The record gives the reactivity of an RNA of 177 nucleotides to DMS and 2A3. Conditions: 150 mM KOAc, 10 mM MgCl2 and 150 mM bicine (pH 8.5), 24 C. It was measured as part of the RMDB library OK1LIB. The DMS profile rests on 1,809 reads. Values cover nucleotides 27 to 126.
[RMDB]
RNA sequence: GGGAACGACUCGAGUAGAGUCGAAAAAAAGUGCCUAACGAAAGAUUCUGUAGUCGGUGCGGUCAGACUUACAUGGUGGACAAAACUGGAAUGGCAGUUCAGCAGCAGAACUGUAUAUUCCACUGGGUCGCUGGAAGAAUUUCGAUUCUUCCAGCGAAAAAGAAACAACAACAACAAC
Reactivity to DMS in 0.01 (KOAc 150mM, MgCl2 10mM, bicine 150mM(pH8.5), 24C), signal-to-noise 2, nucleotides 027 to 126: a030a030a070g030u040g000c060c040u060a130a100c150g010a100a000a140g020a040u020u000c040u020g000u010a100g000u000c080g030g010u020g030c090g000g000u020c000a090g000a060c080u000u010a070c040a010u000g000g000u030g040g000a070c200a110a070a060a130c230u000g040g000a000a000u020g000g010c000a010g000u010u000c010a090g040c130a020g000c190a200g000a000a000c020u000g010u000a040u020a040u000u000c000c000a030c060u000g030g010g020
Reactivity to 2A3 in 0.01 (KOAc 150mM, MgCl2 10mM, bicine 150mM(pH8.5), 24C), signal-to-noise 2, nucleotides 027 to 126: a010a000a010g100u070g020c000c010u080a120a000c020g130a080a050a020g060a120u100u060c060u140g060u050a030g040u080c040g000g040u070g040c010g030g000u020c010a020g060a080c000u040u060a020c030a080u090g050g000u020g010g040a030c030a050a200a080a030c050u050g000g010a000a020u000g030g060c010a000g000u010u000c000a090g000c060a010g070c040a030g020a000a000c000u000g000u050a210u020a000u250u000c020c000a000c050u050g010g080g000